This 177-nucleotide RNA was probed chemically with 2A3 and DMS. Values cover nucleotides 27 to 126. Source: RMDB library OK2TST, as collected in RNAgym.

RNA sequence: GGGAACGACUCGAGUAGAGUCGAAAAAGGCAACGACCAUUGAACUGGCCAUCUAUCAGGCAUUGAGCUACGACUAUGAUUUAGGCCGUGCCGCAUUAUUGGCGCUGAUACAACUGGGCUGCUGCCAAGUACCACCGUGAUUCGUCACGGUGGUACUAAAAGAAACAACAACAACAAC
Reactivity to 2A3 in 0.01 (KOAc 150mM, MgCl2 10mM, bicine 150mM(pH8.5), 24C), signal-to-noise 2, nucleotides 027 to 126: a040g020g000c000a000a020c000g000a010c020c010a020u000u030g030a060a010c030u030g010g050c020c000a020u000c080u130a090u050c070a090g030g000c000a010u040u290g030a070g060c010u030a020c070g090a050c060u190a100u300g110a300u080u000u130a020g020g000c010c000g000u000g000c040c020g000c070a050u050u040a030u020u040g030g000c100g010c220u020g030a110u030a160c030a020a010c100u000g050g000g010c100u030g010c020u030g020c010c000a000
Reactivity to DMS in 0.01 (KOAc 150mM, MgCl2 10mM, bicine 150mM(pH8.5), 24C), signal-to-noise 2, nucleotides 027 to 126: a090g010g000c010a060a020c050g010a080c000c000a090u000u000g000a260a070c060u000g000g020c000c010a070u040c170u000a060u000c140a300g000g010c030a050u000u000g010a150g030c000u010a070c170g020a040c090u010a100u020g000a160u010u020u000a250g000g000c010c040g000u000g000c020c000g020c220a000u000u010a100u000u010g000g000c000g000c070u000g010a090u000a040c060a040a040c220u000g010g010g020c060u010g020c030u000g000c000c020a050

The 2A3 profile rests on 1,901 reads.